Conditions: 150 mM KOAc, 10 mM MgCl2 and 150 mM bicine (pH 8.5), 24 C. An RNA of 177 nucleotides, treated with DMS and 2A3 and read out base by base. Reactivities are rounded to 0.1 and cut off at 0 and 3. It was measured as part of the RMDB library M2PK50. For 2A3 the reverse transcriptase was SuperScript II with manganese. The 2A3 profile rests on 1,620 reads.
RNA sequence: GGGAACGACUCGAGUAGAGUCGAAAAGAGAGCUGCUUCGGCAGCUCUCCGUCAGGUAGUUCCUAUCUCAAUUACCUGUAGUGGCCAACGUCCCGAUAGGAAGAGAGCCCUGCUUCGGCAGGGCUAAGAUUUUUUAACGUUUCGACGUUAAAAAAUCAAAAGAAACAACAACAACAAC
Reactivity to DMS in 0.01 (KOAc 150mM, MgCl2 10mM, bicine 150mM(pH8.5), 24C), signal-to-noise 3, nucleotides 027 to 126: g000a020g010a010g020c010u000g020c020u000u020c240g040g000c000a010g000c000u000c000u000c010c010g000u000c010a040g010g030u010a020g020u000u000c010c020u000a020u000c020u000c190a080a030u000u000a020c010c000u000g000u000a070g020u010g030g030c110c080a130a090c070g000u000c000c010c000g020a020u000a020g000g020a270a180g000a180g000a050g010c010c010c000u000g000c000u000u010c190g020g010c000a000g010g000g000c010u000a000a030
Reactivity to 2A3 in 0.01 (KOAc 150mM, MgCl2 10mM, bicine 150mM(pH8.5), 24C), signal-to-noise 1, nucleotides 027 to 126: g010a010g010a000g000c010u010g030c000u060u140c280g110g000c010a000g000c000u000c010u000c000c000g040u030c000a010g000g020u030a000g010u040u030c010c010u040a050u050c060u010c040a050a060u030u020a030c000c020u010g010u070a100g140u100g150g010c070c060a050a010c060g040u030c000c000c000g000a010u010a010g030g000a050a070g130a010g030a010g030c010c000c000u000g000c000u010u030c140g060g030c000a000g030g020g000c000u000a000a000